[RMDB]
This 207-nucleotide RNA was probed chemically with 2A3 and DMS. Conditions: 150 mM KOAc, 10 mM MgCl2 and 150 mM bicine (pH 8.5), 24 C. DMS adducts were read by reverse transcription with MarathonRT. For 2A3, 2,316 sequencing reads were counted. The data come from the RNA Mapping Database (RMDB), library RNAMAK. For DMS, 2,035 sequencing reads were counted.
RNA sequence: GGGAACGACUCGAGUAGAGUCGAAAACCACAUUUCGAUGUGGACGGAGGGGUCUAAUUGGCGAGGGUAGGACAUGCUCUGAAGCCUCCACGGAGCAACAGCCUACCUCCCCACCGCUUAUUAGACGGAGGCACCCCAUUUUUGGAUUCGUCCAAAAAUAUUCCCCUGUAUUCGUACAGGGGAAUAUAAAAGAAACAACAACAACAAC
Reactivity to 2A3 in 0.01 (KOAc 150mM, MgCl2 10mM, bicine 150mM(pH8.5), 24C), signal-to-noise 3, nucleotides 027 to 156: c010c010a010c020a040u150u160u130c190g090a050u010g000u020g040g060a080c110g060g030a090g010g020g000g010u000c000u050a000a050u030u050g020g010c010g020a040g010g000g000u000a000g000g010a050c120a280u300g000c010u000c000u030g040a080a040g040c000c010u020c000c000a010c010g000g000a000g020c060a080a050c040a130g050c000c000u000a000c000c000u040c040c000c000c000a040c010c020g000c000u000u020a010u030u010a010g020a010c010g000g020a040g020g030c030a050c000c020c000c000a080u080u030u000u030u050g070g000a040u090u000c180g060u120c100c070a000a040a000a000
Reactivity to DMS in 0.01 (KOAc 150mM, MgCl2 10mM, bicine 150mM(pH8.5), 24C), signal-to-noise 1, nucleotides 027 to 156: c000c030a050c020a040u010u070u010c170g020a090u000g070u010g040g010a140c030g000g000a080g030g050g000g030u000c000u010a040a070u000u000g030g000c030g000a290g000g050g010u000a030g000g010a040c070a190u000g020c000u020c010u000g010a050a070g030c040c000u000c010c010a300c080g020g000a070g040c010a150a090c120a190g000c000c000u000a030c000c010u010c300c080c020c040a300c120c010g010c030u000u010a070u000u000a050g000a050c000g010g040a070g000g000c090a070c030c000c000c050a180u000u000u010u000u000g000g000a090u000u020c150g020u000c010c000a020a050a030a120